[RMDB]
RNA sequence: GGGAACGACUCGAGUAGAGUCGAAAACGAUCGCUAAAAUAGCGUUCAAGCCACGUUACGCAGCCCAUCGACAGGCUAAACAGCGACGUGGUUUGCGCGCCAGUGCCGGUAACCAGUUCAGUGCUGGUCGCAUGGCUGGAUUCGUCCAGCCAUGCGAAAAAGAAACAACAACAACAAC
Reactivity to DMS in 0.01 (KOAc 150mM, MgCl2 10mM, bicine 150mM(pH8.5), 24C), signal-to-noise 1, nucleotides 027 to 126: c020g000a000u070c090g000c080u000a090a000a190a070u000a210g010c000g050u020u000c000a000a000g000c020c000a000c000g000u000u000a110c120g040c060a060g030c040c000c040a260u090c300g050a160c300a190g000g020c040u000a040a170a020c300a070g050c010g000a000c000g040u010g000g000u000u000u000g000c000g030c000g020c000c120a020g070u010g000c070c000g020g060u000a070a060c010c000a070g000u000u000c090a240g000u060g000c020u000g000g000
Reactivity to 2A3 in 0.01 (KOAc 150mM, MgCl2 10mM, bicine 150mM(pH8.5), 24C), signal-to-noise 2, nucleotides 027 to 126: c000g000a050u070c070g000c100u100a080a250a090a090u160a110g000c000g030u040u020c000a000a000g030c000c020a020c000g010u090u150a060c040g050c060a050g010c000c030c030a290u210c040g060a120c070a160g030g000c000u020a060a180a000c050a140g030c000g020a040c000g050u030g010g010u000u010u000g000c030g000c010g000c010c000a120g020u070g070c050c070g070g000u050a030a030c020c000a010g000u180u140c090a050g050u050g190c010u000g000g000

This 177-nucleotide RNA was probed chemically with DMS and 2A3. The RNA was probed in 150 mM KOAc, 10 mM MgCl2 and 150 mM bicine (pH 8.5) at 24 C. For DMS the reverse transcriptase was MarathonRT. 2A3 adducts were read by reverse transcription with SuperScript II with manganese.